[RMDB]
RNA sequence: GGGAACGACUCGAGUAGAGUCGAAAAAUGAAUCAUGGCUUGAUUCUAUCAACGAAAGAACAAUGGAGCAGUAUGUUGGAGUCUCAGGUUCGUACCGCUGCGGAUGACACAUCCAAUCACCUGAUUGGUUCUAUACUAAUUUCGAUUAGUAUAGAACAAAAGAAACAACAACAACAAC
Reactivity to DMS in 0.01 (KOAc 150mM, MgCl2 10mM, bicine 150mM(pH8.5), 24C), signal-to-noise 8, nucleotides 027 to 126: a080u030g010a030a030u000c040a040u020g010g010c120u020u010g000a030u000u010c020u010a090u030c060a090a090c130g020a080a070a090g020a080a070c100a080a110u010g000g010a050g020c050a060g000u000a060u020g010u010u020g000g020a170g010u000c040u000c030a040g000g020u000u010c040g020u020a060c080c040g010c070u010g010c100g010g000a050u000g010a110c130a060c110a060u020c020c030a030a070u020c040a080c090c060u010g000a040u020u010g000
Reactivity to 2A3 in 0.01 (KOAc 150mM, MgCl2 10mM, bicine 150mM(pH8.5), 24C), signal-to-noise 9, nucleotides 027 to 126: a000u120g010a020a020u040c030a040u100g230g020c130u050u050g020a020u110u000c030u050a110u100c060a070a090c060g110a090a050a090g080a080a050c070a080a120u160g050g010a050g010c050a020g020u150a060u160g090u100u090g050g020a060g040u000c020u020c060a030g040g040u070u070c040g050u070a060c000c040g040c050u060g010c020g020g010a020u040g080a040c030a010c010a180u020c010c000a020a030u080c030a080c070c040u110g020a130u030u080g060